[RMDB]
Chemical mapping of a 177-nucleotide RNA with DMS and 2A3. The data come from the RNA Mapping Database (RMDB), library OK1LIB. Values cover nucleotides 27 to 126. For 2A3 the reverse transcriptase was SuperScript II with manganese. The reactions ran in a buffer of 150 mM KOAc, 10 mM MgCl2 and 150 mM bicine (pH 8.5), at 24 C. The 2A3 profile rests on 1,186 reads.

RNA sequence: GGGAACGACUCGAGUAGAGUCGAAAAGAGAGAAAUACCGCGCGAAACCAGAGAAAGGACUGUAAGGACGCGAAAUCCUUUCCGUCACUUACCGCAAGAAAGAGCGAUGUGUGACGAAUAGAGAGAGGCCAUUUUAUCGGUUCGCCGAUAAAAUGGCAAAAGAAACAACAACAACAAC
Reactivity to DMS in 0.01 (KOAc 150mM, MgCl2 10mM, bicine 150mM(pH8.5), 24C), signal-to-noise 1, nucleotides 027 to 126: g020a100g000a070g040a000a080a120u050a040c000c030g050c050g020c040g000a010a050a040c040c050a120g000a030g000a020a000a000g000g000a100c080u000g110u040a140a110g040g000a050c030g000c080g000a030a010a110u000c000c050u020u000u000c060c010g000u000c000a000c000u000u030a050c210c000g000c050a000a210g010a160a040a070g000a070g000c000g000a040u000g030u040g000u030g000a080c000g000a020a050u020a040g000a130g000a020g010a030g000
Reactivity to 2A3 in 0.01 (KOAc 150mM, MgCl2 10mM, bicine 150mM(pH8.5), 24C), signal-to-noise 2, nucleotides 027 to 126: g040a000g030a000g020a000a030a000u070a030c010c010g000c000g000c020g050a020a000a070c050c000a070g030a000g000a010a020a020g010g010a020c050u050g030u140a140a000g130g010a030c000g000c010g070a030a030a000u140c000c000u000u000u000c060c000g000u000c000a000c040u040u170a160c030c000g000c000a000a110g110a070a080a000g130a050g000c010g000a060u020g050u020g000u000g130a000c000g000a020a030u190a050g070a000g010a000g020a020g060